[RMDB]
RNA sequence: GGGAACGACUCGAGUAGAGUCGAAAAGAUAUGGAGUGCAUCGAUCUUGUUAACUAAGACAGUCGGAAACGAUCGAGUUAAUAAGGGAGCACUCCUAAGUCAAAACCGAAGAGUUCGCUCUUCGGAACAGCAUCCAAUACUUCGGUAUUGGAUGCUGAAAAGAAACAACAACAACAAC
Reactivity to DMS in 0.01 (KOAc 150mM, MgCl2 10mM, bicine 150mM(pH8.5), 24C), signal-to-noise 1, nucleotides 027 to 126: g000a010u000a300u020g020g000a030g000u000g000c010a290u000c150g000a020u000c000u010u000g020u000u000a030a000c000u000a090a110g000a200c300a070g000u000c020g000g000a080a110a250c000g000a000u010c130g000a040g000u000u000a000a010u000a000a030g000g000g000a060g000c000a020c000u000c000c000u000a000a050g020u000c000a070a070a210a160c000c000g000a000a000g000a000g010u000u000c300g000c000u000c000u000u030c020g010g000a010a030
Reactivity to 2A3 in 0.01 (KOAc 150mM, MgCl2 10mM, bicine 150mM(pH8.5), 24C), signal-to-noise 1, nucleotides 027 to 126: g040a050u120a040u170g000g010a000g000u030g070c050a270u280c100g080a100u040c020u040u000g000u000u000a000a000c000u030a200a020g110a140c140a130g050u000c010g010g020a100a050a050c010g010a050u100c030g000a010g010u000u010a010a040u030a030a010g040g010g010a020g020c000a000c010u010c000c010u000a040a010g010u010c020a020a010a090a080c000c030g000a000a020g030a030g060u150u170c300g010c090u030c000u000u000c000g000g020a010a020

The record gives the reactivity of an RNA of 177 nucleotides to DMS and 2A3. For 2A3, 1,494 sequencing reads were counted. For 2A3 the reverse transcriptase was SuperScript II with manganese. Reactivities are rounded to 0.1 and cut off at 0 and 3. The RNA was probed in 150 mM KOAc, 10 mM MgCl2 and 150 mM bicine (pH 8.5) at 24 C.